[RMDB]
RNA sequence: GGGAACGACUCGAGUAGAGUCGAAAAGUCGCGAGAUCAGCCGGUAAGCUGAGAGACCCACGCAGUCGGACUCUUCAGAUUAUCUCCUCAUCAGGCUAAUCACGGUUUUUGACCCGGCACUUUGCCGGAGCCAGUGCCACUUCGGUGGCACUGGCUCAAAAGAAACAACAACAACAAC
Reactivity to 2A3 in 0.01 (KOAc 150mM, MgCl2 10mM, bicine 150mM(pH8.5), 24C), signal-to-noise 2, nucleotides 027 to 126: g060u040c000g050c100g060a040g010a070u060c030a000g030c020c000g000g000u000a000a020g000c000u000g000a000g010a000g010a040c010c000c000a080c070g300c120a130g020u210c070g000g040a100c020u000c020u270u120c040a000g000a110u050u020a070u080c030u000c060c000u080c070a180u120c070a000g000g000c000u000a000a020u060c000a040c190g020g000u000u030u080u000u000g050a070c000c050c000g030g000c010a050c100u130u110u290g000c000c000g010